Annotation
Structure probing data (DMS and 2A3) for a 207-nucleotide construct. The RNA was probed in 150 mM KOAc, 10 mM MgCl2 and 150 mM bicine (pH 8.5) at 24 C. For DMS the reverse transcriptase was MarathonRT. The 2A3 profile rests on 1,360 reads. In probing experiments dimethyl sulfate is read out at A N1 and C N3, which are open when not base-paired. The DMS profile rests on 4,131 reads.

[RMDB]
RNA sequence: GGGAACGACUCGAGUAGAGUCGAAAAGCCAGAUCGGUGCAGGCUAUAGCUGCCAUCGGCUGACCUAGAGAAGACACAUCAGCUGAUCCUUUGGACCCGAUGACUUGAGACAGAAGUUCUGGGCUUCUCCUCCUGCGGCCUAGCUCUGAGACAAUGAUCCAUAAAUAUGCUUCGGCAUAUUUAUGGAAAAAGAAACAACAACAACAAC
Reactivity to DMS in 0.01 (KOAc 150mM, MgCl2 10mM, bicine 150mM(pH8.5), 24C), signal-to-noise 2, nucleotides 027 to 156: g030c010c010a110g000a060u010c020g050g040u010g000c030a070g000g020c080u000a100u000a140g010c060u000g010c060c040a060u010c020g000g030c010u020g000a070c030c020u030a090g010a100g000a130a050g020a200c060a060c120a080u010c080a100g040c050u000g000a090u020c010c020u010u000u010g010g010a100c000c000c030g010a100u010g000a040c050u000u000g010a110g010a200c050a110g030a070a170g020u010u010c050u010g020g040g000c030u000u010c030u020c030c030u010c040c050u000g000c030g020g030c010c010u000a110g020c030u000c030u000g010a160g020a120c070a100a150u000g010a220
Reactivity to 2A3 in 0.01 (KOAc 150mM, MgCl2 10mM, bicine 150mM(pH8.5), 24C), signal-to-noise 2, nucleotides 027 to 156: g030c000c040a050g020a180u060c030g020g020u100g060c010a020g060g000c030u110a080u130a150g040c010u020g060c020c000a010u010c000g010g000c030u020g050a030c000c030u080a040g030a050g040a180a030g110a040c030a000c010a140u100c060a040g050c050u040g010a100u080c010c010u070u110u150g040g010a070c000c020c070g020a050u060g020a030c040u030u050g010a020g010a080c000a040g060a020a020g070u110u030c130u150g040g070g000c020u020u010c010u020c000c020u020c010c010u050g010c020g000g000c000c000u030a030g000c020u000c000u040g040a050g010a020c100a100a100u110g020a060